[RMDB]
RNA sequence: GGGAACGACUCGAGUAGAGUCGAAAAUUGUCCGGGUUCGCCCGGACAAAGCGGGAGGCGACCGGAGGCCUCCUCCCACGCGAUCCCACGCCUCGCUCCGGAGCGUGAUGACCUUCGGGUCAUCAAAGGUAGAGCAUUUAUUCGUAAAUGCUCUACCAAAAGAAACAACAACAACAAC
Reactivity to DMS in 0.01 (KOAc 150mM, MgCl2 10mM, bicine 150mM(pH8.5), 24C), signal-to-noise 4, nucleotides 027 to 126: u000u000g010u000c000c000g010g000g000u000u000c210g020c000c000c020g000g010a000c010a000a010a060g010c150g010g020g000a000g000g020c080g010a090c010c020g000g000a070g020g020c020c010u000c010c010u000c000c010c010a120c110g010c100g010a150u000c000c000c000a120c070g020c090c100u010c110g010c040u000c030c040g000g020a170g000c170g010u010g000a010u000g000a020c000c000u000u010c190g000g020g000u000c000a000u000c000a030a050a050
Reactivity to 2A3 in 0.01 (KOAc 150mM, MgCl2 10mM, bicine 150mM(pH8.5), 24C), signal-to-noise 1, nucleotides 027 to 126: u030u010g010u020c000c000g010g010g000u040u050c220g060c000c000c000g000g000a000c000a000a000a010g020c030g030g000g010a000g000g000c020g030a030c010c000g020g010a000g030g050c000c010u000c000c010u020c000c010c000a040c060g070c040g030a100u060c030c010c000a040c050g060c000c020u120c080g020c040u010c000c000g030g010a020g080c090g060u070g000a000u000g000a000c010c000u020u040c260g110g020g000u000c000a000u000c000a020a010a000